This 177-nucleotide RNA was probed chemically with DMS and 2A3. Conditions: 150 mM KOAc, 10 mM MgCl2 and 150 mM bicine (pH 8.5), 24 C. DMS adducts were read by reverse transcription with MarathonRT.
RNA sequence: GGGAACGACUCGAGUAGAGUCGAAAAGCACGCGCCGAACCCAGCGAACCCGUCACGGGGCUCUUUGUGUCGGGCCGGAUCACCAGUCGGCGACCCACCCGCCGCUCGUCCGGAUGGGCGAUGACGGCAGACGAGGUAAAUUCGUUUACCUCGUCUGAAAAGAAACAACAACAACAAC
Reactivity to DMS in 0.01 (KOAc 150mM, MgCl2 10mM, bicine 150mM(pH8.5), 24C), signal-to-noise 9, nucleotides 027 to 126: g010c110a070c150g010c020g000c010c010g000a070a110c050c030c040a110g000c050g010a100a180c030c010c010g010u010c050a050c070g010g010g010g020c090u030c050u030u010u030g010u000g010u000c030g010g010g000c100c040g010g010a080u020c050a060c060c060a120g010u010c020g010g000c030g000a080c030c020c010a150c080c030c030g020c000c000g010c030u000c010g010u010c000c000g020g020a110u060g010g010g000c000g000a020u010g000a120c000g010g010
Reactivity to 2A3 in 0.01 (KOAc 150mM, MgCl2 10mM, bicine 150mM(pH8.5), 24C), signal-to-noise 9, nucleotides 027 to 126: g060c040a020c120g060c000g000c010c010g030a070a070c010c010c020a010g030c020g040a040a070c010c000c010g040u060c030a020c060g040g010g100g010c030u060c030u110u120u180g040u020g020u020c020g000g030g010c030c010g050g020a080u100c040a030c100c000a020g070u050c010g010g010c010g040a080c010c010c010a060c010c030c010g010c000c000g000c010u010c000g010u000c000c010g240g140a190u300g140g000g000c010g000a000u030g060a080c000g000g000